[RMDB]
RNA sequence: GGGAACGACUCGAGUAGAGUCGAAAAUUAGUGUUGAUGACAAGUAUAAGACGAGUGAUGAGCUUUGCGUGAAUCUUAAUUUACCCGCAAAUGUCCCAUACUCUCGUGUUAUUUCCAGGAUGGGCUUACGGGACCGACUUCGGUCGGUCCAAAAGAAACAACAACAACAAC
Reactivity to 2A3 in 0.01 (KOAc 150mM, MgCl2 10mM, bicine 150mM(pH8.5), 24C), signal-to-noise 1, nucleotides 027 to 129: u100u060a060g000u050g060u050u000g000a080u160g000a020c000a040a040g010u000a010u000a020a000g120a000c000g000a000g020u020g000a000u000g000a000g000c030u000u000u000g000c020g000u080g030a070a140u070c020u180u090a070a070u190u080u060a180c080c000c040g000c030a000a080a080u040g130u180c000c000c000a000u090a120c010u000c000u030c000g030u060g040u030u040a000u010u040u000c010c010a000g030g040a000u050g000g000g000c000u150u130a150c160g000
Reactivity to DMS in 0.01 (KOAc 150mM, MgCl2 10mM, bicine 150mM(pH8.5), 24C), signal-to-noise 2, nucleotides 027 to 129: u220u000a140g000u020g000u060u040g030a080u090g000a040c140a010a140g020u020a030u030a080a000g000a010c040g050a010g050u020g000a000u040g000a140g000c030u010u030u030g000c100g010u000g110a170a010u000c300u080u020a080a060u000u000u000a070c110c010c010g030c030a000a000a070u060g020u000c030c000c000a020u060a110c150u040c030u020c030g040u020g010u000u060a030u000u000u000c010c000a080g030g000a160u080g000g000g020c170u000u050a030c070g010
Source: RMDB library 15KLIB, as collected in RNAgym. The record gives the reactivity of an RNA of 170 nucleotides to 2A3 and DMS. Reactivities are given for positions 27 through 129. The RNA was probed in 150 mM KOAc, 10 mM MgCl2 and 150 mM bicine (pH 8.5) at 24 C. For DMS the reverse transcriptase was MarathonRT. The DMS profile rests on 2,838 reads.